RNA sequence: GGGAACGACUCGAGUAGAGUCGAAAAUCUGGCCCGAGGCCGCUCGUCGGGAAUCGGACACUGGAACUAGUACUCUGGUCAAUGCGGAUUGCCUGUGGCGGUGUUGGCUGGACGACCGAGUGUCGGCCUUACUCGGAGACUUCGGUCUCCGAGUAAGAAAAGAAACAACAACAACAAC
Reactivity to DMS in 0.01 (KOAc 150mM, MgCl2 10mM, bicine 150mM(pH8.5), 24C), signal-to-noise 4, nucleotides 027 to 126: u020c030u010g000g010c020c010c060g020a070g000g010c020c020g000c040u010c060g020u010c060g010g000g010a120a080u010c030g000g000a080c060a010c030u010g000g010a090a060c090u010a120g010u020a130c160u000c010u010g000g030u000c080a030a060u010g010c020g010g000a050u010u010g000c000c000u020g010u040g000g010c010g000g010u000g000u000u010g000g020c010u010g000g010a010c050g010a190c050c030g010a090g000u000g000u010c020g000g020c110
Reactivity to 2A3 in 0.01 (KOAc 150mM, MgCl2 10mM, bicine 150mM(pH8.5), 24C), signal-to-noise 9, nucleotides 027 to 126: u010c010u030g070g020c020c000c030g040a100g020g030c010c000g010c020u090c050g210u050c020g030g000g000a010a040u030c020g030g020a020c030a010c140u030g040g030a080a040c030u030a060g080u170a090c050u010c000u040g040g020u080c040a040a030u100g060c030g120g060a080u050u080g190c010c010u100g030u120g060g010c020g000g010u030g080u050u070g020g000c030u020g030g020a020c020g010a010c000c010g060a060g040u140g040u050c000g040g000c000